[RMDB]
RNA sequence: GGGAACGACUCGAGUAGAGUCGAAAAUACAACGUGGUCUGGAAGGUGCCGCCGGACUUCGGUGAGCGCGGCCGGCGGGACCUGUAUCACUUCACGCAUCUGGCGGUUGAACACCCGGUGUUCACACUCAAAGACAGCUAUUCGUAGCUGUCUUUGAAAAAGAAACAACAACAACAAC
Reactivity to 2A3 in 0.01 (KOAc 150mM, MgCl2 10mM, bicine 150mM(pH8.5), 24C), signal-to-noise 2, nucleotides 027 to 126: u100a020c020a050a000c070g010u010g030g000u020c040u110g150g130a150a070g050g000u020g120c000c010g040c020c000g080g010a210c000u050u040c030g120g040u140g090a080g170c030g000c000g010g000c000c010g020g000c000g020g000g020a000c010c020u010g000u020a000u000c000a010c000u090u130c100a030c060g050c000a080u040c110u170g220g000c030g070g000u040u080g040a070a010c030a070c000c050c010g050g020u030g010u000u000c020a020c010a010c030
Reactivity to DMS in 0.01 (KOAc 150mM, MgCl2 10mM, bicine 150mM(pH8.5), 24C), signal-to-noise 6, nucleotides 027 to 126: u010a110c070a070a090c030g010u000g010g010u000c040u000g020g010a160a020g000g020u000g000c010c010g010c000c000g010g000a100c020u000u000c050g010g020u010g010a120g010c030g020c250g000g000c010c000g000g000c010g010g000g000a010c010c000u000g000u010a070u000c020a030c010u010u000c070a050c010g000c050a100u010c100u010g000g010c060g010g000u010u000g010a050a060c090a100c010c050c050g030g010u000g010u000u000c020a050c080a130c170